[RMDB]
An RNA of 177 nucleotides, treated with 2A3 and DMS and read out base by base. 2A3 adducts were read by reverse transcription with SuperScript II with manganese. The RNA was probed in 150 mM KOAc, 10 mM MgCl2 and 150 mM bicine (pH 8.5) at 24 C. Source: RMDB library OK1LIB, as collected in RNAgym.
RNA sequence: GGGAACGACUCGAGUAGAGUCGAAAAGACGCCUGUGUGGCGAAGCGAGCAUGAGAUGGAGCCGCAAGAGAAGAUGAGAUAGAAGCGGCCGGAUAGCUUGCUCGCUAAAAGAUCCAUCUCACAGAGACCAGUAAUAGUGCUUCGGCACUAUUACUGGAAAAGAAACAACAACAACAAC
Reactivity to 2A3 in 0.01 (KOAc 150mM, MgCl2 10mM, bicine 150mM(pH8.5), 24C), signal-to-noise 4, nucleotides 027 to 126: g060a000c050g030c000c000u150g030u120g120u240g110g020c010g020a010a020g000c000g000a000g000c000a010u020g010a020g040a180u110g040g040a060g050c000c000g000c030a070a010g090a020g070a180a060g090a120u230g080a030g050a130u120a150g080a230a020g040c000g010g000c000c000g080g140a040u040a060g020c000u000u000g000c010u020c000g000c000u020a090a000a000a030g030a000u030c010c010a030u020c020u000c040a090c020a080g060a010g040a060
Reactivity to DMS in 0.01 (KOAc 150mM, MgCl2 10mM, bicine 150mM(pH8.5), 24C), signal-to-noise 2, nucleotides 027 to 126: g000a240c020g020c010c000u040g000u080g000u000g020g020c000g020a140a000g000c000g000a010g000c000a060u020g000a020g010a070u000g020g000a180g020c000c010g060c040a060a170g010a180g020a150a090g010a300u010g020a150g020a160u020a210g000a190a180g000c030g010g000c000c000g010g000a110u020a050g030c000u000u000g050c000u030c000g000c000u000a020a020a060a050g000a080u040c050c030a090u040c010u000c030a070c110a140g000a090g000a140